[RMDB]
RNA sequence: GGGAACGACUCGAGUAGAGUCGAAAAAGUGAGGCAGGCAUUCACUGACAAGAAGAACAUUUAAAUUUCGGCAAAUGAGUUCAUUAGUAUUCACAAAGCUUUGCACCCCUCAUGUUCAAUAAACCUCGUCCUAAGAUAUCUUCGGAUAUCUUAGGACAAAAGAAACAACAACAACAAC
Reactivity to 2A3 in 0.01 (KOAc 150mM, MgCl2 10mM, bicine 150mM(pH8.5), 24C), signal-to-noise 2, nucleotides 027 to 126: a020g100u070g010a030g000g020c100a030g080g020c000a010u040u040c040a000c000u040g020a030c010a080a020g080a120a020g010a030a000c000a040u090u090u210a160a130a090u120u150u100c020g060g000c010a000a050a100u050g010a060g030u010u000c000a010u010u030a000g060u030a090u070u040c000a020c050a090a070a040g000c070u060u140u110g020c010a060c000c010c000c020u010c000a010u040g060u010u150c030a090a060u130a120a050a020c000c020u050c070
Reactivity to DMS in 0.01 (KOAc 150mM, MgCl2 10mM, bicine 150mM(pH8.5), 24C), signal-to-noise 2, nucleotides 027 to 126: a010g020u000g000a090g030g030c050a140g010g000c120a100u000u000c000a000c080u000g000a120c100a020a100g030a120a160g010a030a040c060a050u000u000u000a040a080a100u000u000u000c050g000g000c060a020a120a050u000g000a060g020u000u010c100a130u000u000a070g040u000a050u000u010c050a070c090a040a080a090g010c080u000u000u010g040c080a070c050c090c000c030u000c080a040u000g020u010u000c020a100a080u000a030a080a080c050c040u000c200
Source: RMDB library RFMREP, as collected in RNAgym. This 177-nucleotide RNA was probed chemically with 2A3 and DMS. 2A3 adducts were read by reverse transcription with SuperScript II with manganese. For 2A3, 1,268 sequencing reads were counted.